[RMDB]
RNA sequence: GGGAACGACUCGAGUAGAGUCGAAAAGUUUGUUGGGCUCAUGGCUUUGAAUUAACGUCUGCAUCAUACUUUUGCAAGAUAGGUAAGGAACAGAAGUGUUGCAUGUGCAAUAGACGCGCUGCAGCGUGUUACAAUUUUGGUUCGCCAAAAUUGUAACAAAAGAAACAACAACAACAAC
Reactivity to DMS in 0.01 (KOAc 150mM, MgCl2 10mM, bicine 150mM(pH8.5), 24C), signal-to-noise 4, nucleotides 027 to 126: g010u000u000u000g010u000u010g000g000g000c050u000c060a050u000g020g010c040u000u000u000g010a110a110u000u010a100a100c110g010u010c020u000g010c060a060u010c090a090u010a070c070u000u000u000u000g010c090a070a080g000a060u000a030g010g010u000a040a090g010g010a070a170c050a030g000a070a060g010u010g030u010u000g000c040a020u010g040u000g020c030a080a140u010a110g010a100c130g010c030g010c030u000g020c030a020g000c020g020u000
Reactivity to 2A3 in 0.01 (KOAc 150mM, MgCl2 10mM, bicine 150mM(pH8.5), 24C), signal-to-noise 3, nucleotides 027 to 126: g010u080u070u040g050u050u050g040g020g000c010u030c050a070u030g030g040c000u120u070u090g040a060a080u110u040a100a010c030g030u000c040u030g000c010a030u030c010a020u090a170c020u000u080u060u020g000c030a060a010g030a060u030a050g010g080u010a030a060g040g010a030a010c000a030g090a080a040g050u030g010u100u000g010c020a050u170g010u010g030c000a030a030u040a180g100a070c060g010c010g010c030u000g010c010a020g020c000g010u040